[RMDB]
RNA sequence: GGGAACGACUCGAGUAGAGUCGAAAAGAUAUGGAGACCCCCAGUCAACAGCUGGCCAUCGGAAACGAUGGUCCAGACAUGACUACGCGUCUCCUAAGUCAAAGGAUUCACCCUUCGGGGUGAAUCCGAUGCAUACGAUGUUCGCAUCGUAUGCAUCAAAAGAAACAACAACAACAAC
Reactivity to DMS in 0.01 (KOAc 150mM, MgCl2 10mM, bicine 150mM(pH8.5), 24C), signal-to-noise 6, nucleotides 027 to 126: g000a020u000a070u010g000g000a030g000a020c000c060c120c260c210a040g010u000c000a100a070c220a170g010c000u000g000g000c000c000a010u000c000g020g000a030a040a050c010g010a010u000g010g000u010c020c020a000g000a020c040a280u000g010a010c000u000a060c170g010c230g010u000c000u000c000c000u000a000a050g000u000c010a100a150a200g010g000a010u000u000c000a010c000c000c000u000u030c240g040g000g020g010u000g010a000a000u000c000c010
Reactivity to 2A3 in 0.01 (KOAc 150mM, MgCl2 10mM, bicine 150mM(pH8.5), 24C), signal-to-noise 2, nucleotides 027 to 126: g000a010u030a010u090g000g010a000g010a000c000c000c010c130c170a010g010u000c070a180a170c050a280g030c010u000g000g000c010c000a000u000c000g000g020a000a010a020c010g000a010u000g050g000u000c010c010a000g010a020c010a240u300g000a000c010u030a020c050g080c110g000u000c000u010c000c010u000a030a000g010u010c080a210a090a250g000g010a000u000u010c000a010c020c000c000u030u110c300g100g000g000g000u000g000a000a000u010c000c000